[RMDB]
RNA sequence: GGGAACGACUCGAGUAGAGUCGAAAACAUCUUGUGUGGUCAAGUAAUUGGAUGCGGACCACGUGCCCGUAGCGUUCAAUGCUACGACGGUUGAGACCGCAAAAGGGAUUUUUGGGCCGCGAACUGACACGUACAGAUCUUUCGAGAUCUGUGCGUGAAAAGAAACAACAACAACAAC
Reactivity to 2A3 in 0.01 (KOAc 150mM, MgCl2 10mM, bicine 150mM(pH8.5), 24C), signal-to-noise 3, nucleotides 027 to 126: c060a070u120c060u080u030g010u010g000u020g040g040u010c040a100a080g020u050a100a140u060u060g090g010a050u090g000c000g000g030a120c020c000a010c020g020u030g020c000c010c000g010u000a000g010c010g050u120u160c210a170a080u260g000c000u020a010c010g040a010c090g010g030u080u100g070a080g020a170c000c000g000c000a000a020a020a080g210g000g050a130u080u100u040u150u220g100g020g020c010c010g030c020g010a060a020c010u010g020a020
Chemical mapping of a 177-nucleotide RNA with 2A3. Reactivities are given for positions 27 through 126. Reactivities are rounded to 0.1 and cut off at 0 and 3. The RNA was probed in 150 mM KOAc, 10 mM MgCl2 and 150 mM bicine (pH 8.5) at 24 C.